[RMDB]
RNA sequence: GGGAACGACUCGAGUAGAGUCGAAAAUAUGAAACCAAUCGAUGAGGUUACAUCUAUGAGCGCUUAUCCAAUUGUUUAUGACAAUCAACCAAUUGAAGUAUUGUAUCAACAUUUAUCAGAGAGCGAGUCCGUUCCUGUAUUUCGAUACAGGAACGGAAAAAGAAACAACAACAACAAC
Reactivity to 2A3 in 0.01 (KOAc 150mM, MgCl2 10mM, bicine 150mM(pH8.5), 24C), signal-to-noise 4, nucleotides 027 to 126: u220a050u090g080a070a020a010c020c010a020a070u120c060g040a050u060g060a030g090g050u120u110a050c000a010u020c050u070a130u190g130a050g030c010g000c020u040u070a120u150c030c030a020a060u020u000g040u030u040u000a080u050g150a060c000a010a020u020c020a010a100c070c030a120a150u080u290g070a200a030g060u080a070u020u010g020u000a010u010c050a000a030c030a050u010u030u190a100u060c050a000g000a000g010a000g060c000g030a000g040
Reactivity to DMS in 0.01 (KOAc 150mM, MgCl2 10mM, bicine 150mM(pH8.5), 24C), signal-to-noise 3, nucleotides 027 to 126: u000a110u000g020a090a040a130c040c010a090a130u010c200g010a070u000g000a080g000g010u020u000a000c080a040u010c100u020a050u010g000a190g000c010g000c000u000u010a050u020c010c110a040a030u000u000g020u000u000u050a050u000g050a030c010a020a030u000c110a060a150c200c120a140a120u010u050g000a090a230g020u020a040u020u010g000u010a010u000c240a060a030c020a000u000u000u010a040u010c170a110g000a020g010a010g000c040g000a100g020